RNA sequence: GGGAACGACUCGAGUAGAGUCGAAAACGGUCCUGCCAUGAGACCGUAACGAGGACAUGUCGCCUCGAAUGGCGUCGGGGAGACGGCAGCUUACCCCAAGGAUGAGCGCCUAAUGCCGGUACCCGGGUAUACGCUACCCCGUUCGCGGGGUAGCGAAGUUGAAAAGGAAGUUCGCUUCCUUUUCAACAAAAGAAACAACAACAACAAC
Reactivity to 2A3 in 0.01 (KOAc 150mM, MgCl2 10mM, bicine 150mM(pH8.5), 24C), signal-to-noise 3, nucleotides 027 to 156: c000g000g000u000c000c010u020g010c000c000a050u050g020a050g010a060c000c000g040u030a010a010c000g000a010g010g020a010c030a160u210g030u160c100g000c000c000u000c000g010a000a000u010g000g000c010g070u030c000g000g010g000g010a130g010a040c000g010g000c010a020g030c000u010u050a040c000c020c060c130a080a110g020g020a120u060g000a000g000c020g030c020c020u060a110a050u070g000c000c000g000g040u060a050c000c000c000g010g010g010u240a230u030a050c010g000c000u000a010c010c000c010c000g000u010u000c070g000c000g060g000g040g010u000a020g010c000g000a010a000
Reactivity to DMS in 0.01 (KOAc 150mM, MgCl2 10mM, bicine 150mM(pH8.5), 24C), signal-to-noise 1, nucleotides 027 to 156: c010g000g020u000c000c010u060g030c050c220a140u030g010a090g000a030c000c020g000u000a050a120c040g000a120g040g030a140c100a090u010g030u020c080g030c000c000u000c010g020a060a070u000g010g020c020g080u010c000g000g000g020g000a190g010a080c020g000g000c020a110g040c000u000u000a040c020c000c030c160a140a180g030g020a080u010g010a040g010c020g020c160c150u000a070a090u000g020c000c000g050g000u000a110c000c010c030g040g000g010u010a070u000a080c060g000c000u000a020c000c000c000c000g010u000u010c240g000c040g090g020g020g020u000a000g000c010g030a000a020